[RMDB]
RNA sequence: GGGAACGACUCGAGUAGAGUCGAAAAGAUAUGGACCACCGCUGCAAUUGGUGCCAGUCGGAAACGACGGUAAUUCCAAUUGAACUACAGCGUGUGGUCCUAAGUCAAACGAGGGUUCGCCCUCGAACGACUCUAAUUUCUUCGGAAAUUAGAGUCGAAAAGAAACAACAACAACAAC
Reactivity to DMS in 0.01 (KOAc 150mM, MgCl2 10mM, bicine 150mM(pH8.5), 24C), signal-to-noise 2, nucleotides 027 to 126: g010a050u000a300u000g000g000a000c000c000a000c000c000g020c000u020g000c010a020a030u000u010g010g050u000g000c000c010a160g080u000c000g020g000a070a090a160c000g000a020c000g000g000u000a040a160u030u000c000c010a010a030u000u000g000a070a060c070u000a270c030a000g000c000g010u000g050u000g010g000u000c000c000u000a000a060g000u020c010a100a110a170c000g000a000g000g000g010u000u030c290g000c010c000c000u000c010g000a030a120
Reactivity to 2A3 in 0.01 (KOAc 150mM, MgCl2 10mM, bicine 150mM(pH8.5), 24C), signal-to-noise 2, nucleotides 027 to 126: g020a030u100a050u150g020g000a000c000c000a030c020c010g000c000u000g000c020a010a030u030u000g020g000u010g040c050c030a160g060u000c000g040g030a070a060a040c000g000a000c010g020g000u180a260a300u280u060c000c000a000a020u020u040g030a050a050c110u170a050c270a000g010c020g010u170g000u010g040g000u000c000c000u000a010a000g010u000c000a020a030a040c020g000a010g000g000g030u100u110c190g150c020c010c000u000c000g000a030a010
The record gives the reactivity of an RNA of 177 nucleotides to DMS and 2A3. DMS (dimethyl sulfate) methylates the pairing face of unpaired adenines and cytosines. Values cover nucleotides 27 to 126. The data come from the RNA Mapping Database (RMDB), library TTRDEL. For 2A3 the reverse transcriptase was SuperScript II with manganese. For 2A3, 3,355 sequencing reads were counted.